RNA sequence: GGGAACGACUCGAGUAGAGUCGAAAAGAUGAAUGUGUACGGAGAUCAUUAGUUCGAAAACCACGUAAUCUCAAAAUGGAAUCAUGCAUGGAAGUCCAGAGGAUAACUCAACACUCAACUAAAGCGCACUGGUCGUAAGGUUCGCCUUACGACCAGUAAAAGAAACAACAACAACAAC
Reactivity to 2A3 in 0.01 (KOAc 150mM, MgCl2 10mM, bicine 150mM(pH8.5), 24C), signal-to-noise 2, nucleotides 027 to 126: g050a020u180g000a110a070u040g000u040g000u130a080c100g020g000a030g000a050u090c020a070u090u150a040g100u040u040c030g100a130a000a000a000c010c000a040c020g070u040a000a110u040c010u000c050a140a150a000a090u060g070g000a010a030u060c030a020u190g130c000a060u000g190g010a090a000g100u040c000c000a000g020a000g000g030a050u060a190a060c010u000c020a050a060c040a040c020u030c010a050a040c170u190a300a070a090g000c020g000c070
Reactivity to DMS in 0.01 (KOAc 150mM, MgCl2 10mM, bicine 150mM(pH8.5), 24C), signal-to-noise 1, nucleotides 027 to 126: g100a040u010g000a090a000u000g030u000g000u030a000c180g020g000a090g060a050u000c060a100u000u000a010g060u020u000c090g000a260a100a130a060c000c000a040c040g000u000a140a130u010c000u000c060a040a060a010a000u000g000g000a070a000u000c030a060u010g010c080a000u000g030g080a020a060g000u000c090c000a030g000a050g000g000a040u000a000a010c180u000c080a050a150c060a030c030u030c030a140a030c130u000a080a140a050g000c060g000c020